[RMDB]
RNA sequence: GGGAACGACUCGAGUAGAGUCGAAAAGACCCAGCUGCUGCAGGCCUGGGUACUGGGGAUGUGGGUGAAGGAGAUUUGCUGUUCACUGCUUUCUCCCCUGGCACAUGGACAAGGAGGCCUAGAUGACCCUCGGUGUUAAGUUCGCUUAACACCGAGGAAAAGAAACAACAACAACAAC
Reactivity to DMS in 0.01 (KOAc 150mM, MgCl2 10mM, bicine 150mM(pH8.5), 24C), signal-to-noise 2, nucleotides 027 to 126: g000a220c000c030c000a040g010c110u000g030c040u010g030c130a090g000g020c050c020u010g000g000g020u000a040c070u000g000g000g000g010a050u000g020u020g000g000g040u000g020a060a150g010g010a090g010a090u020u010u000g020c040u000g010u000u010c130a080c150u010g000c020u010u000u010c030u000c030c000c060c040u000g020g000c070a040c100a090u000g000g000a070c130a100a070g000g000a080g020g000c030c020u010a080g000a090u000g010a120c150
Reactivity to 2A3 in 0.01 (KOAc 150mM, MgCl2 10mM, bicine 150mM(pH8.5), 24C), signal-to-noise 1, nucleotides 027 to 126: g040a020c010c010c010a020g000c060u110g020c030u050g050c070a020g000g070c000c010u040g000g000g000u080a100c040u000g020g000g000g020a050u060g000u030g010g050g040u130g040a080a010g060g070a040g020a070u030u100u300g050c020u040g000u210u100c080a070c100u090g020c030u080u040u060c030u000c050c010c010c000u020g120g000c030a030c020a090u070g040g050a000c000a050a070g050g020a000g010g000c000c020u020a040g070a080u200g040a110c000
The record gives the reactivity of an RNA of 177 nucleotides to DMS and 2A3. Source: RMDB library OK2TST, as collected in RNAgym. Reactivities are rounded to 0.1 and cut off at 0 and 3. For 2A3, 1,080 sequencing reads were counted. Conditions: 150 mM KOAc, 10 mM MgCl2 and 150 mM bicine (pH 8.5), 24 C. 2A3 adducts were read by reverse transcription with SuperScript II with manganese. The DMS profile rests on 1,535 reads.